[RMDB]
RNA sequence: GGGAACGACUCGAGUAGAGUCGAAAAGUGAGUGGCCAGGGUGGGGCUGGGUGGUGCAGGCAGGAGAGCCAUUGAUCUAUUGUGGGCUCUACUCCCUGCCCCAGCCAGAGCACCCCAUUGGCUACCCCGAAUUACGGACAUUCGUGUCCGUAAUUCGAAAAGAAACAACAACAACAAC
Reactivity to DMS in 0.01 (KOAc 150mM, MgCl2 10mM, bicine 150mM(pH8.5), 24C), signal-to-noise 3, nucleotides 027 to 126: g010u010g010a120g010u000g010g020c020c010a060g000g000g010u010g000g000g030g030c000u000g010g000g000u010g000g000u010g000c010a000g000g040c230a020g000g020a020g000a020g020c000c000a130u030u020g000a110u030c230u050a130u040u030g020u030g010g020g020c020u000c000u000a040c010u000c260c010c000u010g010c000c030c000c000a010g000c010c000a030g000a100g000c060a180c000c000c020c220a030u050u010g010g010c000u000a030c000c000c010
Reactivity to 2A3 in 0.01 (KOAc 150mM, MgCl2 10mM, bicine 150mM(pH8.5), 24C), signal-to-noise 5, nucleotides 027 to 126: g200u160g070a060g040u040g010g010c000c010a020g050g050g040u050g010g020g060g000c010u020g010g030g130u000g000g010u010g000c000a000g010g000c000a010g000g010a010g010a000g010c000c010a060u090u190g120a130u120c160u190a220u210u240g120u160g110g000g040c000u000c000u000a010c000u020c000c000c000u000g000c000c010c000c000a010g010c000c000a000g000a000g000c020a100c000c000c000c000a040u020u090g000g000c000u020a020c000c010c000
Background:
This 177-nucleotide RNA was probed chemically with DMS and 2A3. DMS adducts were read by reverse transcription with MarathonRT. Source: RMDB libraries RFM100 and RFMREP, as collected in RNAgym.